The data come from the RNA Mapping Database (RMDB), library RNAMAK. Chemical mapping of a 207-nucleotide RNA with 2A3 and DMS. DMS adducts were read by reverse transcription with MarathonRT. The 2A3 profile rests on 937 reads.
[RMDB]
RNA sequence: GGGAACGACUCGAGUAGAGUCGAAAAUUGACCUUCGGGUCAAGUCAGUGCGUACUACCUACUGGAGCUUCAUAUUCGAGUGGCUCCCAAAUAGGAGCUGCUUAGACAAAUAUAAGCGUUGAAAGUAGGUAUCGCUUAUUUUGGUUUUCGAACCAAAGAUGCACGUAGUUUUCGAACUACGUGCAUCAAAAGAAACAACAACAACAAC
Reactivity to 2A3 in 0.01 (KOAc 150mM, MgCl2 10mM, bicine 150mM(pH8.5), 24C), signal-to-noise 2, nucleotides 027 to 156: u010u050g010a000c000c000u040u070c300g090g030g000u010c000a000a000g100u050c080a050g090u060g140c020g030u060a140c000u000a030c080c020u030a010c000u000g010g000a000g020c000u030u050c180a010u010a010u030u000c030g000a000g000u020g000g000c000u050c040c010c010a080a300a090u300a090g000g000a000g000c000u050g020c010u040u040a140g020a040c070a030a050a000u000a000u000a000a010g040c040g100u200u040g020a030a030a000g000u000a000g000g000u000a000u010c000g000c000u000u040a150u010u130u050u010g010g010u010u070u000u170c180g060a010a040c000c000a020a020a020
Reactivity to DMS in 0.01 (KOAc 150mM, MgCl2 10mM, bicine 150mM(pH8.5), 24C), signal-to-noise 1, nucleotides 027 to 156: u000u010g010a000c010c000u000u000c300g030g030g000u000c020a000a010g000u010c050a150g050u000g010c030g000u000a030c120u000a030c030c020u010a010c000u010g000g000a180g040c030u000u000c130a040u000a070u010u000c020g010a010g050u010g000g010c010u000c020c000c040a030a100a220u010a080g010g010a020g020c000u000g010c010u000u000a060g010a190c160a060a040a060u010a000u000a030a010g050c000g020u000u020g010a110a100a030g000u000a020g000g010u000a010u000c020g060c000u000u000a030u000u000u000u000g030g000u000u000u020u000c140g030a110a130c030c000a060a070a170